[RMDB]
RNA sequence: GGGAACGACUCGAGUAGAGUCGAAAAUAAAUGUUAACAAUAAUUCAUGAUGUAAAAAUGUUAUGAGGAUGUUUUUAUUAGAGGCUAAAAAAAAAUGUUUAUGCAAUGAUAAAACGAGUUAAGCAUUUAUCAGAGAAGGUUUCGACCUUCUCUGAUAAAAAGAAACAACAACAACAAC
Reactivity to 2A3 in 0.01 (KOAc 150mM, MgCl2 10mM, bicine 150mM(pH8.5), 24C), signal-to-noise 1, nucleotides 027 to 126: u200a000a030a000u010g020u110u010a010a010c020a030a060u200a150a050u080u000c000a000u000g040a010u100g010u300a210a000a000a000a200u060g000u020u000a060u060g000a000g040g020a070u070g160u000u120u090u000u000a010u000u040a060g000a040g140g000c010u020a060a000a030a000a000a000a000a000a050u130g050u010u000u000a130u160g000c060a090a100u080g000a000u140a040a010a010a000c000g000a020g100u000u140a150a000g040c000a000u000u000